[RMDB]
RNA sequence: GGGAACGACUCGAGUAGAGUCGAAAAUGGUAAAGAGCUUUGAGCUCACGGACCUCUGUGACUAUAAGUGCGGCGGCUCUUCUUUCGACGAACAAGACCUCGUAGCGGAAGAGCUUAUUAGAGCCAAACUACAGUAUGAGUUCGCUCAUACUGUAGUAAAAGAAACAACAACAACAAC
Reactivity to 2A3 in 0.01 (KOAc 150mM, MgCl2 10mM, bicine 150mM(pH8.5), 24C), signal-to-noise 5, nucleotides 027 to 126: u090g000g020u080a050a080a050g040a020g030c020u150u230u240g090a020g010c010u050c010a010c020g040g010a040c010c060u110c050u080g080u030g060a070c040u050a050u040a270a050g050u060g080c070g040g030c030g010g000c020u000c000u020u000c000u060u150u090c040g040a030c010g010a080a020c060a230a050g100a140c020c010u020c010g010u020a020g040c020g010g000a000a000g000a000g000c010u030u000a040u020u090a020g020a010g010c010c000a050a090
Reactivity to DMS in 0.01 (KOAc 150mM, MgCl2 10mM, bicine 150mM(pH8.5), 24C), signal-to-noise 9, nucleotides 027 to 126: u010g010g010u010a060a110a090g010a060g010c020u000u010u010g020a110g010c060u000c010a080c100g010g000a110c090c120u000c070u000g020u000g010a100c060u000a070u010a060a060g010u000g020c150g020g020c110g010g000c010u000c010u000u000c000u010u000u010c060g010a030c030g000a040a080c140a100a130g000a140c270c110u000c010g010u000a060g030c300g000g000a020a010g000a020g000c010u010u000a040u000u000a100g010a090g010c020c030a080a120